Source: RMDB library OK1LIB, as collected in RNAgym. An RNA of 177 nucleotides, treated with DMS and read out base by base.
RNA sequence: GGGAACGACUCGAGUAGAGUCGAAAAGAAGACGUGACGAAAAGUCACGUCAAUACAGAGACUACGCAACUCUGAAAAACACAACCAAAGUGUAAAAGCGUAGCAGGAUCGAGAGAUCCUGAAAAGAUCCCCAUCGUCCAUUCGUGGACGAUGGGGAAAAAGAAACAACAACAACAAC
Reactivity to DMS in 0.01 (KOAc 150mM, MgCl2 10mM, bicine 150mM(pH8.5), 24C), signal-to-noise 1, nucleotides 027 to 126: g000a210a220g000a000c060g000u000g050a000c000g000a080a020a110a240g000u000c000a060c000g000u000c000a050a020u000a220c000a010g000a000g000a030c300u030a000c000g000c000a240a060c000u000c000u000g000a000a070a120a110a000c000a010c030a000a070c130c070a080a080a000g020u000g020u000a000a050a030a210g010c000g050u010a000g000c110a000g000g000a000u000c000g000a280g000a240g000a080u000c000c000u240g000a180a000a180a050g000a020